[RMDB]
RNA sequence: GGGAACGACUCGAGUAGAGUCGAAAAUACUUAGUACGCGCGUAGUUGCAGGCAUUCCGGGUGCUGCAACUGACGCGGAAGACUUUUCCCAGAGUGUGCGCUUCAACUGGCGUGCUGAGUAGUGCACGAAUUGCACGUACGUUCGCGUACGUGCAAAUAACUAUUGGUCCUUCGGGACCAAUAGUUAAAAAGAAACAACAACAACAAC
Reactivity to 2A3 in 0.01 (KOAc 150mM, MgCl2 10mM, bicine 150mM(pH8.5), 24C), signal-to-noise 2, nucleotides 027 to 156: u130a000c000u000u010a000g000u000a000c000g010c000g000c000g000u010a010g000u000u000g000c010a100g240g000c030a090u180u160c130c080g210g040g000u010g020c000u000g000c000a000a000c000u040g080a020c000g000c010g000g000a010a000g220a090c020u230u070u050u050c000c000c000a000g000a000g030u130g000u000g000c030g010c040u010u060c110a260a300c210u010g000g000c010g000u000g000c000u000g000a020g020u080a010g000u010g000c020a010c010g040a080a070u040u000g000c000a000c000g000u000a000c000g000u010u040c230g000c000g100u000a000c000g000u000g000c000a000a000a000
Reactivity to DMS in 0.01 (KOAc 150mM, MgCl2 10mM, bicine 150mM(pH8.5), 24C), signal-to-noise 2, nucleotides 027 to 156: u010a030c030u000u000a050g020u010a060c010g030c000g040c010g040u000a030g020u010u000g020c000a080g010g010c030a020u000u000c020c300g010g080g120u000g020c010u000g000c020a020a030c000u010g010a020c010g020c000g000g000a050a130g000a130c160u000u010u000u000c000c020c020a290g000a140g000u030g010u010g000c020g000c030u010u000c020a070a100c080u000g030g010c030g010u000g020c000u000g000a150g020u000a080g030u000g020c020a020c000g000a080a200u000u000g000c020a000c000g020u010a000c000g020u010u000c300g020c040g030u000a020c000g010u000g000c000a000a000a070

Structure probing data (2A3 and DMS) for a 207-nucleotide construct. For DMS the reverse transcriptase was MarathonRT. Conditions: 150 mM KOAc, 10 mM MgCl2 and 150 mM bicine (pH 8.5), 24 C. 2A3 adducts were read by reverse transcription with SuperScript II with manganese.